RNA sequence: GGGAACGACUCGAGUAGAGUCGAAAAUUCGUCUUGUCCAUGCUCUUCAUCUGAGCUGGCUGGGGAAAGCGGAAUGACUGGUAGUACCUGAACUCCCCUGAUCAAUCCGCCAAUGAAAAAGCGCAUGCAAAGACGGACAUUUCGAUGUCCGUCUUUGAAAAGAAACAACAACAACAAC
Reactivity to DMS in 0.01 (KOAc 150mM, MgCl2 10mM, bicine 150mM(pH8.5), 24C), signal-to-noise 4, nucleotides 027 to 126: u010u010c030g020u010c010u000u010g010u000c010c010a020u080g020c020u000c020u000u000c250a070u050c240u030g000a020g000c030u010g010g000c010u010g000g000g010g010a020a100a100g000c110g010g000a050a060u020g000a070c050u000g000g020u010a040g020u000a230c160c140u010g020a090a100c040u000c050c040c010c080u000g000a130u000c030a010a060u000c000c010g030c000c060a080a050u020g000a060a060a030a060a090g000c110g010c060a060u020g010
Reactivity to 2A3 in 0.01 (KOAc 150mM, MgCl2 10mM, bicine 150mM(pH8.5), 24C), signal-to-noise 6, nucleotides 027 to 126: u060u040c040g010u010c050u020u040g040u090c000c000a050u160g010c010u010c000u090u120c050a210u060c080u110g010a010g030c040u020g010g000c000u000g010g000g000g010a010a100a040g010c020g020g020a080a060u090g010a070c020u030g090g030u020a040g000u060a110c010c080u090g040a060a030c010u050c000c030c000c040u040g080a220u070c020a030a060u010c000c010g010c020c000a090a090u170g090a070a040a030a050a000g060c070g000c050a020u080g010